[RMDB]
RNA sequence: GGGAACGACUCGAGUAGAGUCGAAAAGUCAGUCAACUAUUCCUGCGCGCCCGUUCUAGUGACUGACAGAAAGAGCUGCUUAUACAUUCAAACGGGCGCGCAGGAUGAAUGUAUAAAGCAGCUCAAAGCUAUCAGUCGUGUUCGCACGACUGAUAGCAAAAGAAACAACAACAACAAC
Reactivity to 2A3 in 0.01 (KOAc 150mM, MgCl2 10mM, bicine 150mM(pH8.5), 24C), signal-to-noise 2, nucleotides 027 to 126: g000u000c010a000g000u000c000a030a030c100u280a300u210u060c000c010u020g000c010g000c000g000c020c010c030g120u190u010c130u220a040g010u000g050a000c000u000g000a000c010a030g170a010a080a000g000a000g000c060u000g000c010u000u000a000u010a000c000a000u010u000c000a000a140a070c120g000g040g000c000g010c000g000c020a000g020g000a000u000g020a000a000u000g000u010a000u000a030a060a000g000c000a000g000c000u000c000a000a020a000
An RNA of 177 nucleotides, treated with 2A3 and read out base by base.
Conditions: 150 mM KOAc, 10 mM MgCl2 and 150 mM bicine (pH 8.5), 24 C.